[RMDB]
RNA sequence: GGGAACGACUCGAGUAGAGUCGAAAACGCCAUGGCAAUAACCGACGUCCUUCGCUCGGCCACGAUCUCGUGGAACCGCACGGACGGCCUCAAAGUUCAGCCCGUCCUCGGAAAGACCGAGAACACCUCGGACGCGAAAACCAUGAAAGCGAUCCGACACGGUUAAGAUGUUCGCAUCUUAACCGUGAAAAGAAACAACAACAACAAC
Reactivity to 2A3 in 0.01 (KOAc 150mM, MgCl2 10mM, bicine 150mM(pH8.5), 24C), signal-to-noise 2, nucleotides 027 to 156: c000g000c040c020a040u050g000g020c040a000a210u050a280a070c100c010g040a230c010g090u040c000c010u090u110c040g010c010u000c000g060g040c020c000a060c010g100a200u070c130u070c150g010u010g020g040a080a050c000c030g010c080a070c030g000g000a000c030g000g000c040c010u130c080a210a260a090g080u200u160c030a020g030c030c000c010g010u000c000c000u030c000g010g030a150a060a050g100a060c030c000g010a010g020a040a030c070a070c120c030u040c080g000g010a010c000g000c000g000a040a000a000a000c000c000a000u020g070a110a050a010g020c000g020a100u060c000c000g040a030